Chemical mapping of a 177-nucleotide RNA with DMS and 2A3.
RNA sequence: GGGAACGACUCGAGUAGAGUCGAAAAGUCUCAGCGAAUCCGGGUGGAUACCCGUGGACCCGCGCACCCUGUCCACUAGCGCCGACAACGUGUGGGCCAUCGGCGAUGCGACCGUGCUGACGCUGCCUGCGCUUUACUGAUUCGUCAGUAAAGCGCAAAAAGAAACAACAACAACAAC
Reactivity to DMS in 0.01 (KOAc 150mM, MgCl2 10mM, bicine 150mM(pH8.5), 24C), signal-to-noise 2, nucleotides 027 to 126: g030u000c080u030c000a100g020c040g020a080a100u000c040c000g000g010g000u010g010g000a060u050a080c190c010c000g090u020g000g000a100c030c000c040g000c020g000c010a080c030c100c030u000g000u020c010c030a120c100u020a080g000c030g000c080c110g010a000c130a110a060c140g010u000g040u010g000g000g000c010c060a030u010c080g000g100c060g000a140u030g010c000g000a040c000c030g020u000g000c040u000g010a230c050g030c000u010g000c000c020
Reactivity to 2A3 in 0.01 (KOAc 150mM, MgCl2 10mM, bicine 150mM(pH8.5), 24C), signal-to-noise 4, nucleotides 027 to 126: g080u010c030u010c040a040g000c000g070a090a020u060c020c050g000g050g000u070g060g160a100u140a230c000c010c020g010u070g000g030a160c000c010c010g030c010g000c010a060c000c020c030u050g020u010c000c020a040c080u070a050g040c040g020c050c020g060a020c020a060a030c050g030u040g000u050g030g030g030c010c010a060u100c020g050g000c040g030a020u060g040c030g040a080c000c000g060u100g020c050u030g010a030c030g000c030u050g040c010c040
For DMS, 2,572 sequencing reads were counted.
Values are in units of 0.01, from 0 to 300, in steps of 10.